[RMDB]
RNA sequence: GGGAACGACUCGAGUAGAGUCGAAAAAUUUCGACACGCGUGCGUAACACCCGAGGCGCCACGUAUAGCGGUGAUCUGUGCUACGAGGUGCAGAAUUUCUUGGUAAAGUGAAAUACCCUCGACACGGCACUCAUUUAAUCUUCGGAUUAAAUGAGUGAAAAGAAACAACAACAACAAC
Reactivity to 2A3 in 0.01 (KOAc 150mM, MgCl2 10mM, bicine 150mM(pH8.5), 24C), signal-to-noise 9, nucleotides 027 to 126: a000u070u110u080c040g040a010c010a010c070g030c010g030u050g020c020g040u070a110a020c030a080c050c020c000g020a070g000g050c020g020c030c030a040c020g050u070a060u100a120g070c060g030g050u090g040a080u040c020u050g030u040g020c030u050a140c050g030a030g020g020u100g020c040a020g070a070a050u050u050u020c020u060u110g150g020u240a120a120a170g090u100g120a020a030a050u140a100c010c000c000u010c010g040a040c020a020c040g030g000
Reactivity to DMS in 0.01 (KOAc 150mM, MgCl2 10mM, bicine 150mM(pH8.5), 24C), signal-to-noise 5, nucleotides 027 to 126: a100u010u010u010c030g000a070c090a060c060g010c030g020u010g010c020g000u000a070a090c110a040c040c030c030g010a100g000g000c080g010c030c030a040c050g010u000a070u010a090g020c040g000g000u010g000a080u010c010u020g010u000g000c110u040a080c070g010a060g000g020u020g010c140a060g010a100a070u010u000u010c010u010u020g020g020u040a080a100a070g010u020g010a030a040a040u010a080c050c010c000u000c020g000a120c060a010c010g000g010
Notes: Structure probing data (2A3 and DMS) for a 177-nucleotide construct. The reactions ran in a buffer of 150 mM KOAc, 10 mM MgCl2 and 150 mM bicine (pH 8.5), at 24 C. DMS adducts were read by reverse transcription with MarathonRT. The 2A3 profile rests on 12,966 reads. For DMS, 12,571 sequencing reads were counted.